Source information:
An RNA of 177 nucleotides, treated with DMS and 2A3 and read out base by base. Conditions: 150 mM KOAc, 10 mM MgCl2 and 150 mM bicine (pH 8.5), 24 C. 2A3 adducts were read by reverse transcription with SuperScript II with manganese. The DMS profile rests on 4,394 reads.
[RMDB]
RNA sequence: GGGAACGACUCGAGUAGAGUCGAAAAAAAAAGAUAUGGAUCUCGGAACUACGCUCACACAGGAGGAGAUUCGGAAACGAAUCUCUACCCACCCUGUGAAUGAGCGCCGAGAUCCUAAGUCAAAAAACAUCUAUUUAGUGUUCGCACUAAAUAGAUGAAAAGAAACAACAACAACAAC
Reactivity to DMS in 0.01 (KOAc 150mM, MgCl2 10mM, bicine 150mM(pH8.5), 24C), signal-to-noise 3, nucleotides 027 to 126: a050a070a080a080a080g000a020u000a070u000g000g000a010u000c000u010c000g000g000a120a020c170u030a300c020g000c010u000c000a090c000a010c000a010g000g000a170g000g000a010g010a010u000u000c000g000g000a000a020a050c000g000a030a010u000c000u000c000u000a060c020c020c020a300c020c000c000u000g000u000g000a080a200u010g000a000g020c020g000c000c010g000a000g000a010u000c000c010u000a000a040g010u040c010a000a030a070a050a080a120
Reactivity to 2A3 in 0.01 (KOAc 150mM, MgCl2 10mM, bicine 150mM(pH8.5), 24C), signal-to-noise 2, nucleotides 027 to 126: a000a000a000a030a040g030a000u030a020u050g020g000a000u000c000u000c020g010g020a110a040c210u300a020c300g000c010u020c000a060c000a000c000a010g000g000a000g000g000a000g000a000u000u000c000g000g000a010a020a010c010g010a000a000u000c000u010c000u050a090c010c000c000a050c000c000c000u000g000u000g000a020a130u190g000a000g000c000g000c010c000g010a000g000a010u010c000c000u000a000a000g000u000c000a080a050a000a020a000a120